[RMDB]
RNA sequence: GGGAACGACUCGAGUAGAGUCGAAAAAGCAAUGAUUCGAAGCACUUCUUUUUACACUAUUUCGGAAACCCAAGGACUCAAUCGUAUGGAUAUGUAAAAUACAGGAUUUCCAAUCCUAGCAGGAAAGGGAGGGAAACGGAUACUCAAUUUAAAGUGAUCUUUAAACAAGGUUCGCCUUGUUUAAAGAAAAAGAAACAACAACAACAAC
Reactivity to 2A3 in 0.01 (KOAc 150mM, MgCl2 10mM, bicine 150mM(pH8.5), 24C), signal-to-noise 4, nucleotides 027 to 156: a010g100c090a070a070u090g030a090u070u100c060g070a080a020g050c020a020c030u080u030c040u080u100u040u090u190a060c050a030c050u100a110u080u110u110c080g020g030a050a060a060c000c000c020a050a040g090g000a030c020u020c100a060a080u040c030g040u120a080u080g050g010a040u030a070u170g060u070a040a090a010a030u110a050c060a020g000g050a050u080u040u050c040c010a010a000u000c000c000u010a040g030c040a020g000g070a040a050a040g030g010g000a040g010g000g000a020a070a000c020g010g010a000u030a030c020u040c030a060a130u040u090u180a140a080a010g000u000g030a040
Reactivity to DMS in 0.01 (KOAc 150mM, MgCl2 10mM, bicine 150mM(pH8.5), 24C), signal-to-noise 3, nucleotides 027 to 156: a100g020c080a040a170u010g010a100u000u000c070g030a110a180g010c030a090c030u000u000c010u000u000u000u010u000a090c060a070c050u010a100u010u000u000c030g020g000a040a050a070c030c020c040a060a160g010g010a090c070u000c060a060a100u000c060g030u010a080u010g000g020a110u010a070u000g010u000a070a030a040a070u010a080c030a080g010g000a060u000u000u010c050c060a040a090u010c030c040u000a090g050c030a110g000g010a040a040a110g010g000g020a090g040g010g010a070a030a060c050g010g000a100u010a060c050u000c020a030a060u000u000u000a030a040a040g020u010g000a110